[RMDB]
RNA sequence: GGGAACGACUCGAGUAGAGUCGAAAACAAGCCAUUGUUGACGUUGACGCCCAAGUCGUCGAACAGCUCCUGGUGCUUGGCGAAGGCGUCCUUGUAGAAGAUCCUGACCGCGUGGCCGAAGACGAUGCACACCUCUACCUUUCGAGGUAGAGGUGUGAAAAGAAACAACAACAACAAC
Reactivity to DMS in 0.01 (KOAc 150mM, MgCl2 10mM, bicine 150mM(pH8.5), 24C), signal-to-noise 3, nucleotides 027 to 126: c070a080a180g000c030c090a240u030u000g030u000u000g020a090c180g020u020u000g010a140c130g000c030c050c130a100a100g020u020c000g030u020c040g010a020a070c130a060g010c050u010c050c100u000g000g010u020g040c020u000u010g000g020c020g020a120a130g030g000c000g010u020c060c050u000u060g010u030a080g010a060a150g000a130u000c060c040u000g010a040c030c000g000c030g040u000g000g000c040c030g000a110a040g000a040c050g010a090u010g000
Reactivity to 2A3 in 0.01 (KOAc 150mM, MgCl2 10mM, bicine 150mM(pH8.5), 24C), signal-to-noise 3, nucleotides 027 to 126: c050a020a000g060c000c030a090u070u140g030u020u070g060a050c090g020u070u010g040a060c030g020c000c010c020a080a030g130u090c040g020u000c010g070a050a050c030a060g020c020u040c070c060u110g030g050u050g040c020u030u040g060g000c040g020a030a020g040g000c010g020u030c000c000u050u120g090u060a040g010a150a000g000a040u040c020c020u020g030a050c010c040g010c040g010u040g000g000c000c010g010a040a020g040a060c040g030a040u120g030